[RMDB]
RNA sequence: GGGAACGACUCGAGUAGAGUCGAAAAUUGGUCAUUUUCAAAGGAUUCUCAAAGGUCAUGAUUGGGUCCUGCCAAAAGUAAUGAACACCUUACAGAUACUGAAUGGUCAAAACUGUUACCGUGGGUGUCUCUGACAGGGUUUCGACCCUGUCAGAGAAAAAGAAACAACAACAACAAC
Reactivity to DMS in 0.01 (KOAc 150mM, MgCl2 10mM, bicine 150mM(pH8.5), 24C), signal-to-noise 1, nucleotides 027 to 126: u030u010g040g010u060c080a140u000u060u000u000c150a080a220a030g000g010a190u010u000c010u000c050a090a080a120g000g020u010c080a070u030g010a170u000u000g020g000g020u010c110c020u000g010c000c040a040a050a150a110g000u030a050a070u030g000a130a160c090a110c040c010u000u000a080c070a010g000a080u000a060c070u000g000a030a030u000g000g010u010c100a000a030a100a100c170u000g030u000u000a090c030c040g020u010g030g000g010u000g030
Chemical mapping of a 177-nucleotide RNA with DMS. The RNA was probed in 150 mM KOAc, 10 mM MgCl2 and 150 mM bicine (pH 8.5) at 24 C.